Description
This 207-nucleotide RNA was probed chemically with 2A3 and DMS. DMS adducts were read by reverse transcription with MarathonRT. For 2A3, 1,827 sequencing reads were counted.
RNA sequence: GGGAACGACUCGAGUAGAGUCGAAAAUUGCUUGAGUGCUUUUCUCUCUGAAUGCUGUGAAAGGUUUGUAUUGCCUAACCGUAUCCUUAGAUGCCUACAGUAUCUUUAUUCAAUGAGAUCAGUAGUUGUCCAGGCUGCACACCAGAGUCACCUGAAAGGUAAUGUUGAGGUUCGCCUCAACAUUACCAAAAGAAACAACAACAACAAC
Reactivity to 2A3 in 0.01 (KOAc 150mM, MgCl2 10mM, bicine 150mM(pH8.5), 24C), signal-to-noise 4, nucleotides 027 to 156: u070u100g010c020u060u110g020a060g080u090g110c000u020u000u060u030c050u010c000u000c050u060g040a150a040u050g010c030u040g070u040g060a090a080a110g050g020u060u060u050g130u090a150u090u200g020c000c010u050a070a070c030c050g030u100a070u140c000c010u040u070a030g000a070u080g040c000c010u000a010c020a060g040u080a070u040c000u030u150u090a180u150u190c120a100a120u210g020a030g010a050u000c020a060g030u030a000g010u030u060g040u040c030c000a000g010g000c030u010g000c020a030c000a000c010c040a030g010a030g120u050c000a060c050c010u060g030a100a070a090
Reactivity to DMS in 0.01 (KOAc 150mM, MgCl2 10mM, bicine 150mM(pH8.5), 24C), signal-to-noise 1, nucleotides 027 to 156: u010u010g000c020u000u000g020a150g000u010g080c020u020u010u000u000c030u010c010u000c030u000g000a110a060u000g020c080u010g030u030g020a100a100a060g010g000u020u020u010g060u000a090u010u000g020c010c030u000a090a120c020c020g050u000a060u010c030c030u010u000a050g120a040u000g010c120c000u000a050c040a050g050u020a020u000c030u010u010u000a150u020u010c150a060a170u000g020a050g000a010u000c080a210g000u000a030g010u000u020g010u000c000c030a090g000g070c040u000g010c050a010c040a100c060c150a040g020a060g020u020c030a100c040c020u000g000a050a060a090